The data come from the RNA Mapping Database (RMDB), library OK2TRN. Structure probing data (DMS and 2A3) for a 177-nucleotide construct. The reactions ran in a buffer of 150 mM KOAc, 10 mM MgCl2 and 150 mM bicine (pH 8.5), at 24 C. The 2A3 profile rests on 1,169 reads. For 2A3 the reverse transcriptase was SuperScript II with manganese.
[RMDB]
RNA sequence: GGGAACGACUCGAGUAGAGUCGAAAAAUGAGCUCCGCGGCUCACUGGAGCCGUACAACGUCUUUGAGAGCCAGGACGAGCUAAAUCACCGUAUGGAGAUCCUGGCCAAGCUCAACACACUGGUCAACAGUACGCCUAGAUUCGUCUAGGCGUACUGAAAAGAAACAACAACAACAAC
Reactivity to DMS in 0.01 (KOAc 150mM, MgCl2 10mM, bicine 150mM(pH8.5), 24C), signal-to-noise 2, nucleotides 027 to 126: a080u000g000a070g020c010u010c050c140g000c000g000g020c000u010c000a190c300u000g020g000a030g020c010c010g010u000a070c140a090a090c140g000u000c100u000u000u000g000a060g030a150g080c010c020a020g010g000a040c140g020a150g000c050u000a040a140a110u000c060a220c070c040g000u000a120u010g010g010a060g000a110u000c020c010u000g000g010c010c070a110a080g010c020u000c040a060a040c260a080c160a090c040u010g020g030u000c060a050a220
Reactivity to 2A3 in 0.01 (KOAc 150mM, MgCl2 10mM, bicine 150mM(pH8.5), 24C), signal-to-noise 1, nucleotides 027 to 126: a000u080g000a000g040c020u020c080c040g000c000g010g040c000u060c020a050c250u180g250g030a000g020c000c000g040u030a020c020a120a020c020g070u000c030u050u110u140g130a190g010a000g040c000c000a000g020g020a020c040g040a060g120c060u120a000a090a090u130c050a070c140c030g150u230a120u210g060g000a070g030a090u050c000c020u000g000g000c000c000a010a000g000c000u000c040a030a010c040a000c000a010c120u140g000g080u090c050a120a090